[RMDB]
Source: RMDB library OK3TST, as collected in RNAgym. Chemical mapping of a 207-nucleotide RNA with 2A3 and DMS. Reactivities are given for positions 27 through 156. The RNA was probed in 150 mM KOAc, 10 mM MgCl2 and 150 mM bicine (pH 8.5) at 24 C. Values are in units of 0.01, from 0 to 300, in steps of 10.
RNA sequence: GGGAACGACUCGAGUAGAGUCGAAAACGACUGUUGGUCGACCAAUUGCCUCAGCAAGUGUCUCAAACGAGUUGAUAACUCCAUCAAGGGUAUUGGGCUCAAGAUGACAGACAGUGUAGCCACGGUCACGGAGUUCAUCACGGAUCGAUGCUUGAAGUACAUCAAUUUACUUCGGUAAAUUGAUGUAAAAAGAAACAACAACAACAAC
Reactivity to 2A3 in 0.01 (KOAc 150mM, MgCl2 10mM, bicine 150mM(pH8.5), 24C), signal-to-noise 4, nucleotides 027 to 156: c040g050a010c030u070g060u170u080g110g020u040c020g010a050c000c010a040a070u090u170g050c020c000u100c060a060g040c050a050a070g070u070g040u060c040u020c030a130a150a060c080g020a010g030u040u010g060a070u060a140a050c010u000c050c030a120u100c100a110a100g060g010g030u100a070u060u100g070g040g000c040u030c080a060a100g040a120u140g050a060c040a020g070a020c010a020g040u040g060u140a010g010c010c020a020c020g030g000u010c020a020c060g030g000a040g010u140u150c080a090u030c010a070c030g010g000a020u050c030g030a030u070g010c010u040u050g050a060a030g080
Reactivity to DMS in 0.01 (KOAc 150mM, MgCl2 10mM, bicine 150mM(pH8.5), 24C), signal-to-noise 3, nucleotides 027 to 156: c040g010a060c050u010g030u000u000g020g030u000c030g000a160c040c040a120a090u030u000g020c020c020u010c030a140g000c050a030a080g020u000g000u020c030u010c050a050a090a140c050g020a080g010u000u000g020a120u000a090a080c000u000c010c000a110u000c060a060a280g010g020g010u000a060u000u000g000g020g000c020u000c020a080a220g010a130u000g000a070c030a100g020a060c030a100g000u000g040u000a100g040c070c020a050c020g020g020u000c040a100c180g020g010a090g000u000u000c050a050u000c050a080c030g000g000a080u000c050g000a060u000g000c000u010u000g010a090a120g000